The record gives the reactivity of an RNA of 207 nucleotides to 2A3 and DMS. Conditions: 150 mM KOAc, 10 mM MgCl2 and 150 mM bicine (pH 8.5), 24 C. It was measured as part of the RMDB library OK3TST. DMS adducts were read by reverse transcription with MarathonRT.
RNA sequence: GGGAACGACUCGAGUAGAGUCGAAAAAGUUCUAGUCCUCACCUAAGAUCAGACUAACACGGCCCUCAAAGCAAGAGCACUGGGUUGGGCUUUGUGGUGGGGAUCAGUGUCUCAUUUUUAGUCCCAAAUUAAAAACGAGAUUUUGGGCUGUACAUCAUAUUACCUCAGGUUUCGACCUGAGGUAAUAAAAAGAAACAACAACAACAAC
Reactivity to 2A3 in 0.01 (KOAc 150mM, MgCl2 10mM, bicine 150mM(pH8.5), 24C), signal-to-noise 2, nucleotides 027 to 156: a000g060u070u050c040u020a010g020u000c000c000u000c000a000c000c000u060a070a040g040a210u090c070a080g120a180c010u040a090a030c050a020c050g010g000c000c040c010u030c050a180a210a060g030c070a130a090g040a000g010c050a010c040u030g110g020g050u150u050g040g030g000c000u040u030u050g070u080g040g000u030g000g020g000g000a000u020c000a000g000u000g040u010c000u000c010a100u060u130u060u050u200a030g050u130c000c020c000a000a000a000u050u050a010a040a030a000a020c120g010a020g000a130u010u060u000u030g000g000g000c020u060g060u100a090c060a060u100c020a020
Reactivity to DMS in 0.01 (KOAc 150mM, MgCl2 10mM, bicine 150mM(pH8.5), 24C), signal-to-noise 2, nucleotides 027 to 156: a110g010u000u010c040u040a090g010u000c000c010u010c030a040c020c010u010a090a120g010a140u010c070a110g010a100c000u000a040a090c050a060c020g040g050c000c060c010u000c030a110a100a220g040c130a110a100g000a080g050c020a060c080u000g000g010g030u000u000g010g010g000c000u000u000u000g030u010g010g010u020g020g010g010g000a000u000c010a050g020u000g020u000c000u000c010a080u000u000u000u000u000a030g020u000c040c090c080a050a070a060u000u000a020a010a020a030a070c020g020a060g010a140u000u000u030u030g000g020g050c050u000g020u000a060c120a140u000c070a260